[RMDB]
RNA sequence: GGGAACGACUCGAGUAGAGUCGAAAACGGCUGCUCACAGCCGCGUCCGCAUUGGCCCGGUCAGGCCGACCCCGAGAGGAUGAGAUGAGCGACGAUACCAACACCGCUACGGUGAGUUUUGAGGCGAUAACACCGCCCACAAACGACGCGCAAGCGGAGACAACAAGAAUUUCGAUUCUUGUUGUCUAAAAGAAACAACAACAACAAC
Reactivity to 2A3 in 0.01 (KOAc 150mM, MgCl2 10mM, bicine 150mM(pH8.5), 24C), signal-to-noise 5, nucleotides 027 to 156: c010g020g000c020u040g030c060u090c080a230c010a050g010c050c000g000c040g080u020c010c030g030c090a130u090u180g010g010c020c030c040g050g050u110c090a030g000g030c000c000g020a070c000c010c020c030g100a080g000a030g120g020a070u090g020a070g020a080u110g020a020g050c040g040a050c040g020a040u110a140c010c030a080a050c030a030c060c000g000c030u050a020c050g060g030u050g030a090g010u010u020u040u060g090a120g000g000c010g010a030u070a140a040c070a070c070c000g000c000c010c000a040c050a020a020a010c020g160a070c030g000c010g030c190a080a000g000c000g020g000
Reactivity to DMS in 0.01 (KOAc 150mM, MgCl2 10mM, bicine 150mM(pH8.5), 24C), signal-to-noise 2, nucleotides 027 to 156: c010g000g150c030u000g020c060u020c210a080c080a090g030c040c010g000c020g000u000c020c040g010c100a180u010u020g050g060c040c000c020g090g030u010c100a090g010g040c010c020g020a090c030c000c000c040g030a160g010a120g000g000a080u010g000a170g020a080u010g000a100g000c000g030a120c040g010a280u000a070c010c000a070a120c030a110c010c000g000c010u000a030c010g000g000u000g010a090g000u000u000u000u000g000a150g020g030c020g000a120u000a100a160c030a300c180c020g000c010c000c000a130c150a000a010a010c010g000a170c180g010c010g000c040a050a080g000c000g020g000
Overview: An RNA of 207 nucleotides, treated with 2A3 and DMS and read out base by base. For 2A3, 3,749 sequencing reads were counted. Reactivities are rounded to 0.1 and cut off at 0 and 3.